[RMDB]
RNA sequence: GGGAACGACUCGAGUAGAGUCGAAAAACGAGCCCGUACGCGGACUCGAAGGGCCCCAGAAGACCAAGGGGCCCAAACCUACCACUCAUUAGAUGCAUGGAAAUCACUAGGUGAUACGUCACCUAGAACACGCUUUUAAGCUUCGGCUUAAAAGCAAGGUGUCUUAUCUGUUCGCAGAUAAGACACCAAAAGAAACAACAACAACAAC
Reactivity to 2A3 in 0.01 (KOAc 150mM, MgCl2 10mM, bicine 150mM(pH8.5), 24C), signal-to-noise 2, nucleotides 027 to 156: a000c000g000a000g020c000c000c000g000u030a040c210g030c000g090g020a070c020u000c000g020a000a070g010g000g000c000c000c000c000a090g120a280a020g080a100c070c030a080a120g020g000g000g000c010c000c020a030a000a000c000c000u060a030c000c020a050c040u120c010a070u060u250a040g050a090u040g050c100a070u100g040g030a040a100a040u130c040a080c080u010a000g000g000u000g000a000u030a060c260g060u030c010a010c010c000u000a000g000a010a000c040a000c050g000c000u010u000u000u000a000a000g000c000u000u090c210g060g000c000u000u040a000a000a000a000g010c010a010a000

The record gives the reactivity of an RNA of 207 nucleotides to 2A3. Conditions: 150 mM KOAc, 10 mM MgCl2 and 150 mM bicine (pH 8.5), 24 C. High 2A3 reactivity points to a flexible backbone, as in loops and unpaired stretches. The 2A3 profile rests on 873 reads. Source: RMDB library M2RFPK, as collected in RNAgym.